[RMDB]
RNA sequence: GGGAACGACUCGAGUAGAGUCGAAAACCACAGGACGUCAAGUUCCCGGGCGGCGGCCAGAUCGUUGGUGGAGUUUACUUGUUGCCGCGCAGGGGCCCUAGAUUGGGUGUGCGCGCGACGAGGAAGAGUAUACUAGAAGGUUCGCCUUCUAGUAUACAAAAGAAACAACAACAACAAC
Reactivity to 2A3 in 0.01 (KOAc 150mM, MgCl2 10mM, bicine 150mM(pH8.5), 24C), signal-to-noise 4, nucleotides 027 to 126: c000c010a020c020a070g050g080a010c000g020u060c030a060a130g040u070u050c000c000c010g030g060g000c020g000g000c010g000g000c000c010a020g000a060u080c030g010u030u050g020g010u020g060g020a080g010u020u070u110a050c000u010u000g010u000u030g100c160c020g000c010g000c000a030g070g080g090g010c000c000c000u170a220g020a290u150u290g010g000g000u120g040u030g030c000g000c000g000c000g000a000c000g010a010g040g050a060a040g040a010
Reactivity to DMS in 0.01 (KOAc 150mM, MgCl2 10mM, bicine 150mM(pH8.5), 24C), signal-to-noise 5, nucleotides 027 to 126: c010c000a130c160a100g010g000a040c050g000u000c050a070a140g010u010u010c010c010c010g010g000g010c040g010g010c030g000g010c020c050a070g000a050u020c090g000u000u000g000g010u000g000g000a250g000u000u000u000a130c010u000u020g000u000u000g000c190c040g010c000g010c010a040g020g010g010g010c000c010c000u000a100g010a170u040u010g010g000g030u000g000u010g010c000g000c010g000c010g000a000c000g020a000g010g000a080a070g010a250
Conditions: 150 mM KOAc, 10 mM MgCl2 and 150 mM bicine (pH 8.5), 24 C. Structure probing data (2A3 and DMS) for a 177-nucleotide construct. 2A3 adducts were read by reverse transcription with SuperScript II with manganese. The data come from the RNA Mapping Database (RMDB), libraries RFM100 and RFMREP. For DMS the reverse transcriptase was MarathonRT.